[RMDB]
RNA sequence: GGGAACGACUCGAGUAGAGUCGAAAAGAUAUGGAUUCUUCGACAUGCAGGAGAAGAGUCGGAAACGACUCGUAACUGCAACAGCGAGAGAAUCCUAAGUCAAAAGUGAGAUCUUCGGAUCUCACAACAUUGAUCAACAGUUCGCUGUUGAUCAAUGAAAAGAAACAACAACAACAAC
Reactivity to 2A3 in 0.01 (KOAc 150mM, MgCl2 10mM, bicine 150mM(pH8.5), 24C), signal-to-noise 5, nucleotides 027 to 126: g020a020u080a060u150g000g000a000u020u000c010u010u030c020g080a120c040a110u090g000c010a000g010g080a030g020a030a000g000a010g000u000c000g000g000a080a100a020c020g000a010c000u000c000g010u030a040a030c010u030g000c000a020a010c050a030g060c010g010a210g010a010g010a270a010u000c010c010u020a120a030g070u040c050a040a040a110a060g010u020g010a020g000a010u010c020u050u150c300g050g010a000u000c000u000c000a000c000a010a010
Reactivity to DMS in 0.01 (KOAc 150mM, MgCl2 10mM, bicine 150mM(pH8.5), 24C), signal-to-noise 6, nucleotides 027 to 126: g000a050u000a300u010g000g000a010u000u000c000u000u000c010g000a070c100a250u000g000c010a000g010g000a150g010a100a150g000a010g000u000c000g010g010a090a120a190c000g000a000c000u000c000g000u000a070a150c000u000g000c010a020a070c300a140g010c000g000a050g000a040g000a040a010u000c000c000u000a030a090g000u000c050a080a070a140a070g010u000g000a020g000a010u000c000u000u020c260g030g000a000u000c000u000c000a000c000a090a130